[RMDB]
RNA sequence: GGGAACGACUCGAGUAGAGUCGAAAAUUCAUCGCCCUUUGGAGGGGGUACUUUUUCAAUAAUGGUAGUGAUUAACCGGUCAAUACCAAGCCCGGUUUUAGCGGACACUAAGGGGAUGGUGUUGGGACGGAGGAAUGUUAUUCGUAACAUUCCUCCGAAAAGAAACAACAACAACAAC
Reactivity to 2A3 in 0.01 (KOAc 150mM, MgCl2 10mM, bicine 150mM(pH8.5), 24C), signal-to-noise 2, nucleotides 027 to 126: u060u010c040a040u080c070g090c000c000c000u020u040u040g140g030a090g010g020g020g030g000u020a050c030u080u180u060u060u230c100a130a120u130a250a070u120g040g010u040a060g020u010g070a060u080u040a030a060c030c010g000g000u000c000a020a020u040a150c000c010a020a020g020c000c000c000g030g000u040u050u000u040a020g000c010g000g040a010c010a010c020u050a040a030g020g030g000g000a020u030g010g000u030g010u030u040g060g030g050a030
Reactivity to DMS in 0.01 (KOAc 150mM, MgCl2 10mM, bicine 150mM(pH8.5), 24C), signal-to-noise 3, nucleotides 027 to 126: u010u020c040a050u000c060g000c010c010c040u000u020u010g000g020a080g020g000g010g000g020u000a060c110u000u010u000u000u020c180a080a070u010a100a100u000g010g000u000a030g010u000g010a060u000u020a080a060c040c030g010g000u000c030a040a040u010a080c120c160a100a140g010c110c020c010g000g010u010u000u010u000a120g020c130g000g010a090c070a080c110u010a050a030g020g020g010g000a090u000g000g000u010g010u000u010g020g020g030a230
The record gives the reactivity of an RNA of 177 nucleotides to 2A3 and DMS. DMS adducts were read by reverse transcription with MarathonRT. Conditions: 150 mM KOAc, 10 mM MgCl2 and 150 mM bicine (pH 8.5), 24 C. The data come from the RNA Mapping Database (RMDB), library OK2TRN.